[RMDB]
RNA sequence: GGGAACGACUCGAGUAGAGUCGAAAAUAAUCGGUAAUAUAAUGUGAGUGCCAGAGAGAUUCUCACCACCUGUCUCUGGGACAGACGUGCUCGGCUUGAUAAAAUAUGCGCACGUGUUGCCGCCACGCAAUAACCGGGCUUUCGAGCCCGGUUAUUGAAAAGAAACAACAACAACAAC
Reactivity to DMS in 0.01 (KOAc 150mM, MgCl2 10mM, bicine 150mM(pH8.5), 24C), signal-to-noise 3, nucleotides 027 to 126: u000a080a110u070c020g010g030u000a090a000u000a060u000a090a130u020g030u010g010a180g030u010g000c060c010a020g010a010g020a070g000a210u020u030c060u000c070a060c070c160a060c100c010u000g000u000c000u010c030u020g000g000g000a020c030a060g000a070c020g030u020g000c070u000c060g000g000c090u010u000g000a060u040a120a030a070a100u030a150u030g010c120g060c050a010c000g000u000g000u010u030g000c050c020g000c140c030a040c190g020
Reactivity to 2A3 in 0.01 (KOAc 150mM, MgCl2 10mM, bicine 150mM(pH8.5), 24C), signal-to-noise 4, nucleotides 027 to 126: u240a040a090u200c070g020g010u090a130a100u100a090u050a210a180u160g090u090g120a060g030u090g110c050c020a020g030a000g000a000g010a130u140u030c070u020c070a000c030c040a030c010c040u080g050u020c000u030c050u110g020g050g010a010c010a000g060a010c010g040u020g020c000u020c060g170g000c040u050u020g080a040u190a160a140a070a010u200a050u120g020c020g000c010a020c030g010u010g040u050u040g010c010c010g010c040c000a060c040g060
Source: RMDB library OK1LIB, as collected in RNAgym. Chemical mapping of a 177-nucleotide RNA with DMS and 2A3. For 2A3, 2,041 sequencing reads were counted. Reactivities are rounded to 0.1 and cut off at 0 and 3.